[RMDB]
RNA sequence: GGGAACGACUCGAGUAGAGUCGAAAAUCACUCUCACGAGUGAUCGUACGAGUGAGUGAGUGAGUGUGUUCGUACGAUCUCGUGAACGAUCUCGUACGAGUGUGUGUUCGUUCGUACGUGAUCGUACACGUGUGAGAACGAGAACGUACUCUCACACCAGAGUAGUUCCAUUCGUGGAACUACUCUGAAAAGAAACAACAACAACAAC
Reactivity to 2A3 in 0.01 (KOAc 150mM, MgCl2 10mM, bicine 150mM(pH8.5), 24C), signal-to-noise 6, nucleotides 027 to 156: u050c010a010c010u020c000u020c010a020c030g020a030g040u100g060a070u020c020g020u060a010c040g010a030g050u060g010a050g020u080g030a050g030u110g040a090g000u050g020u010g000u020u030c030g010u030a040c020g010a030u000c020u020c020g000u000g020a020a010c000g000a000u000c000u010c010g000u010a000c010g000a020g000u020g010u020g040u040g080u120u190c030g010u010u000c010g000u000a000c000g000u010g010a010u010c000g000u020a020c060a010c020g010u060g020u050g050a040g020a070a050c050g010a030g050a170a020c030g000u030a040c010u010c000u000c030a010c000a010c030
Reactivity to DMS in 0.01 (KOAc 150mM, MgCl2 10mM, bicine 150mM(pH8.5), 24C), signal-to-noise 2, nucleotides 027 to 156: u000c000a010c010u000c010u000c140a130c110g000a100g000u020g010a080u000c040g030u000a020c050g020a100g030u010g000a150g010u010g010a130g030u000g010a070g000u000g010u000g020u000u000c030g000u000a060c000g020a110u000c020u010c020g060u000g000a100a040c010g010a030u000c000u000c000g030u010a030c000g000a060g030u000g020u010g020u000g020u010u000c030g020u010u000c000g030u000a020c020g040u000g000a000u000c060g090u000a060c000a060c050g000u010g000u010g020a140g010a080a070c020g000a080g010a040a060c020g000u000a030c040u000c000u000c010a050c000a160c080

An RNA of 207 nucleotides, treated with 2A3 and DMS and read out base by base. The data come from the RNA Mapping Database (RMDB), library OK3TST. DMS adducts were read by reverse transcription with MarathonRT. In probing experiments dimethyl sulfate is read out at A N1 and C N3, which are open when not base-paired. For DMS, 7,503 sequencing reads were counted. Conditions: 150 mM KOAc, 10 mM MgCl2 and 150 mM bicine (pH 8.5), 24 C. 2A3 adducts were read by reverse transcription with SuperScript II with manganese.